The data come from the RNA Mapping Database (RMDB), library OK2TRN.
Structure probing data (2A3 and DMS) for a 177-nucleotide construct.
Reactivities are given for positions 27 through 126.
The reactions ran in a buffer of 150 mM KOAc, 10 mM MgCl2 and 150 mM bicine (pH 8.5), at 24 C.
2A3 adducts were read by reverse transcription with SuperScript II with manganese.
2A3 is a SHAPE reagent: it acylates the 2'-hydroxyl of flexible nucleotides of all four kinds.
RNA sequence: GGGAACGACUCGAGUAGAGUCGAAAAGCUUAGGAUUAGAAACCUUAGUGAUGAUAAGUUCUACGUCAAGUCUGACGGUGGUUUUUAUGCCAAGGAAACUUCGCAGAUUGAUGGCAACCUGAAACUCACUACACGACUGAUUCGUCAGUCGUGUAGUAAAAGAAACAACAACAACAAC
Reactivity to 2A3 in 0.01 (KOAc 150mM, MgCl2 10mM, bicine 150mM(pH8.5), 24C), signal-to-noise 2, nucleotides 027 to 126: g000c000u030u030a000g020g000a050u110u100a130g090a200a120a040c010c010u030u020a020g000u020g070a150u030g010a020u030a150a060g030u060u020c030u050a050c010g040u000c020a040a070g200u010c030u030g090a230c030g080g000u080g080g000u080u050u020u020u020a140u290g180c040c050a050a030g090g010a020a050a010c000u000u010c010g000c000a010g000a080u000u020g030a020u010g030g030c020a020a040c020c020u050g030a070a030a020c070u080c040
Reactivity to DMS in 0.01 (KOAc 150mM, MgCl2 10mM, bicine 150mM(pH8.5), 24C), signal-to-noise 4, nucleotides 027 to 126: g000c030u010u000a010g010g010a090u000u000a090g000a160a120a090c040c010u000u000a030g020u010g030a140u010g010a130u000a100a120g000u000u000c050u010a080c020g020u000c000a020a060g010u000c020u000g000a090c030g010g020u010g010g010u010u000u010u000u010a110u020g030c210c260a110a130g000g000a030a020a040c020u000u000c040g010c020a020g010a070u000u000g010a020u010g020g000c120a030a070c030c030u000g000a060a080a110c110u010c100